[RMDB]
RNA sequence: GGGAACGACUCGAGUAGAGUCGAAAAAUCACACCCUGACCCAUGUAGUUCGGGUGAGAGAUGGUGUGCCAGAGGUGCUGUGGCACCCAGCUGGCAGGAAGGGUAGGGAGUGCCGGAAGCGACAUGCUCGAGCACUGAGAUUCGUCUCAGUGCUCGAAAAAGAAACAACAACAACAAC
Reactivity to 2A3 in 0.01 (KOAc 150mM, MgCl2 10mM, bicine 150mM(pH8.5), 24C), signal-to-noise 1, nucleotides 027 to 126: a000u030c010a000c000a000c010c010c010u000g070a030c000c070c060a170u280g110u300a110g000u100u050c090g010g030g040u020g030a070g000a000g000a010u100g000g130u090g010u030g050c010c000a030g010a030g000g040u040g040c110u110g030u300g220g000c020a000c000c020c000a080g160c000u010g000g040c000a030g030g040a070a040g070g010g020u110a140g040g040g020a130g030u170g090c000c020g000g030a070a000g080c010g030a040c000a070u120g020c040
Reactivity to DMS in 0.01 (KOAc 150mM, MgCl2 10mM, bicine 150mM(pH8.5), 24C), signal-to-noise 2, nucleotides 027 to 126: a120u000c010a130c000a010c010c000c000u000g020a030c000c050c110a160u010g020u010a070g020u000u000c300g000g000g010u000g010a070g010a050g010a110u010g010g010u010g000u010g000c010c010a020g010a190g010g010u000g040c000u000g030u020g030g010c030a020c000c020c060a050g000c020u000g000g010c010a050g020g010a120a030g000g000g000u020a110g000g020g000a210g020u000g000c070c040g010g000a080a070g000c020g000a080c080a060u000g030c140